Conditions: 150 mM KOAc, 10 mM MgCl2 and 150 mM bicine (pH 8.5), 24 C. The record gives the reactivity of an RNA of 207 nucleotides to 2A3. For 2A3, 825 sequencing reads were counted.

[RMDB]
RNA sequence: GGGAACGACUCGAGUAGAGUCGAAAAGGAAGAAAGACGUAAAAUAAUAAAAACAUUGGCAUCACCUGUAGACUCAAAUCCUGUGAGUGAAGGACCUGAGCAAUGAAGGAUGGAUUGAACUCGUGAUUAGCCUUCUUCAGCAUAUGUAAAAUGAUGACGAUCACGUAUCGUUCGCGAUACGUGAUCGAAAAGAAACAACAACAACAAC
Reactivity to 2A3 in 0.01 (KOAc 150mM, MgCl2 10mM, bicine 150mM(pH8.5), 24C), signal-to-noise 2, nucleotides 027 to 156: g020g010a020a090g000a040a020a030g050a030c060g010u080a010a020a100a140u180a010a150u120a040a120a040a080a030c070a070u040u050g060g000c010a030u010c010a030c000c050u050g130u110a050g020a100c000u030c000a040a040a040u000c020c020u060g030u070g070a020g020u050g060a080a030g040g010a010c020c070u050g030a020g020c040a050a110u130g000a030a000g060g000a010u070g040g020a010u090u000g010a040a000c030u070c070g020u070g000a090u040u060a010g000c000c000u010u000c000u020u010c020a040g000c020a060u090a050u170g070u180a030a030a110a080u230g050a060u090g000a030